[RMDB]
RNA sequence: GGGAACGACUCGAGUAGAGUCGAAAAGAUAUGGAUCGCCAUCUCUAGCGUGGCUGUAGGGUCGGAAACGACCCUAUUUUGAGCUCGGGUGGUCGAUCCUAAGUCAAAAGUCCCCUUCGGGGGACAAGUGUAAUAUCCACUUCGGUGGAUAUUACACAAAAGAAACAACAACAACAAC
Reactivity to DMS in 0.01 (KOAc 150mM, MgCl2 10mM, bicine 150mM(pH8.5), 24C), signal-to-noise 2, nucleotides 027 to 126: g000a030u000a240u010g000g010a030u020c030g030c010c000a010u000c010u000c110u010a180g040c270g040u010g040g030c040u010g000u000a010g030g000g020u000c000g000g000a040a050a160c000g000a010c000c000c000u000a000u000u000u000u020g030a100g010c040u000c190g010g030g040u000g000g030u000c020g010a000u000c000c000u000a000a090g000u000c030a110a130a140a210g000u000c000c000c000c000u000u000c180g050g000g010g000g000a000c000a010a020
Reactivity to 2A3 in 0.01 (KOAc 150mM, MgCl2 10mM, bicine 150mM(pH8.5), 24C), signal-to-noise 2, nucleotides 027 to 126: g010a000u060a020u080g020g020a010u010c000g070c030c010a010u030c100u050c050u160a070g210c080g300u300g180g060c100u020g040u060a010g020g000g000u050c010g000g000a020a000a010c000g000a010c000c000c020u000a000u000u020u050u080g050a000g000c030u060c300g000g000g040u040g020g080u220c040g010a010u010c000c000u010a030a000g000u000c000a010a060a090a260g010u010c030c010c000c020u050u240c230g140g000g020g010g000a030c000a010a020